This 177-nucleotide RNA was probed chemically with DMS. The DMS profile rests on 992 reads. It was measured as part of the RMDB library OK2TRN. DMS adducts were read by reverse transcription with MarathonRT.
RNA sequence: GGGAACGACUCGAGUAGAGUCGAAAAAAUAUUUAACCUAUUUACAGGUUGUGAGAGAACUAGGCACCUAGUACAGGGUAAUGUUGGCACAUGGUAACCUUUAAUAAACUGUUGCUAUUCAACAAGCGAGGGAAGAGAAUUUCGAUUCUCUUCCCUCAAAAGAAACAACAACAACAAC
Reactivity to DMS in 0.01 (KOAc 150mM, MgCl2 10mM, bicine 150mM(pH8.5), 24C), signal-to-noise 1, nucleotides 027 to 126: a040a060u020a000u000u000u000a060a020c020c020u000a140u000u000u000a070c200a040g000g000u010u000g010u000g000a120g010a100g010a060a070c070u000a050g000g000c040a040c070c010u000a080g010u000a070c120a000g000g000g000u000a060a060u010g010u000u000g010g000c190a100c120a010u010g010g030u010a030a060c070c020u000u000u010a110a060u010a030a080a120c120u000g010u000u000g010c120u000a080u000u000c120a010a000c060a090a100g010c200